Source information:
Conditions: 150 mM KOAc, 10 mM MgCl2 and 150 mM bicine (pH 8.5), 24 C. The record gives the reactivity of an RNA of 207 nucleotides to 2A3 and DMS. For 2A3, 760 sequencing reads were counted. For DMS the reverse transcriptase was MarathonRT. For 2A3 the reverse transcriptase was SuperScript II with manganese.
[RMDB]
RNA sequence: GGGAACGACUCGAGUAGAGUCGAAAAAGCGCACUUCGGUGCGCUAAAAAGCGUACUACCAUAGCGGAGAACCAACAGCGAACUACGGACUCCCAAAUAGGAGUCCGCGACAUGGUUCUCGGCUAUGGUAUCGCAAAAACACCAAUUCGUUGGUGAAUAAGUGUAUACCGUUCGCGGUAUACACUUAAAAAGAAACAACAACAACAAC
Reactivity to 2A3 in 0.01 (KOAc 150mM, MgCl2 10mM, bicine 150mM(pH8.5), 24C), signal-to-noise 1, nucleotides 027 to 156: a000g000c000g040c020a000c010u000u140c290g000g000u000g000c000g000c000u000a000a020a000a000a010g020c050g070u160a170c020u040a000c020c000a000u000a000g000c090g150g000a000g000a000a000c000c000a040a140c080a150g120c000g100a130a070c020u120a000c300g000g000a010c000u060c000c170c020a290a220a240u300a110g000g020a020g000u000c000c030g000c000g030a000c000a060u050g000g000u000u000c000u000c000g000g010c020u000a000u000g010g000u000a000u010c020g000c000a030a030a030a030a030c000a010c010c000a000a020u070u090c100g130u140u020g030g020u030g000a030a000
Reactivity to DMS in 0.01 (KOAc 150mM, MgCl2 10mM, bicine 150mM(pH8.5), 24C), signal-to-noise 1, nucleotides 027 to 156: a050g040c000g020c010a000c010u000u010c300g050g010u000g000c000g050c010u000a000a020a020a100a060g000c040g020u000a100c140u000a040c000c000a050u000a040g010c010g060g020a000g000a000a020c000c020a090a140c070a180g020c070g040a140a100c020u000a020c000g000g000a070c000u010c000c000c000a030a190a220u000a060g030g010a040g000u000c000c010g030c010g000a080c060a200u000g010g010u000u000c010u000c000g050g000c000u000a030u000g000g000u000a000u000c040g010c020a000a030a040a120a140c010a100c000c010a030a180u000u010c160g010u000u010g010g000u010g000a130a100